[RMDB]
RNA sequence: GGGAACGACUCGAGUAGAGUCGAAAACAGGUCGGACCGCGAGGAGGUGGAGAUACCAUGCCGACCCGAAGAAGGAAAGGAGGACACGGACGACAAACCGUAGGUACUCUUGCCCUUUAUUGUUGGGAGCACGACGAGUUCGCUCGUCGUAAAAGAAACAACAACAACAAC
Reactivity to 2A3 in 0.01 (KOAc 150mM, MgCl2 10mM, bicine 150mM(pH8.5), 24C), signal-to-noise 5, nucleotides 027 to 129: c040a010g020g040u010c010g030g030a060c050c020g040c050g030a030g010g020a040g000g000u080g020g010a090g010a010u130a080c000c010a020u070g020c010c000g040a040c000c000c040g080a060a040g000a000a000g000g020a020a000a010g020g000a000g000g000a000c010a000c010g020g060a050c050g010a030c130a040a120a020c000c010g000u030a070g050g050u110a060c010u000c000u020u050g030c000c010c000u020u090u040a140u060u090g070u020u070g010g000g010a030g030c060
Reactivity to DMS in 0.01 (KOAc 150mM, MgCl2 10mM, bicine 150mM(pH8.5), 24C), signal-to-noise 7, nucleotides 027 to 129: c080a120g060g030u030c040g000g030a130c090c040g000c120g010a050g010g030a070g040g000u030g000g030a120g000a080u000a110c110c040a070u060g000c070c030g030a070c040c030c020g000a060a050g000a000a070g060g050a040a140a030g020g030a010g040g010a140c020a080c070g000g000a010c090g040a130c300a100a110a090c050c020g020u000a090g000g010u050a100c030u000c000u050u000g020c300c020c010u000u000u000a000u040u010g040u010u000g020g020g010a120g020c020

The record gives the reactivity of an RNA of 170 nucleotides to 2A3 and DMS. The reactions ran in a buffer of 150 mM KOAc, 10 mM MgCl2 and 150 mM bicine (pH 8.5), at 24 C. As a SHAPE reagent, 2A3 marks flexible, mostly unpaired nucleotides at the ribose 2'-OH. 2A3 adducts were read by reverse transcription with SuperScript II with manganese.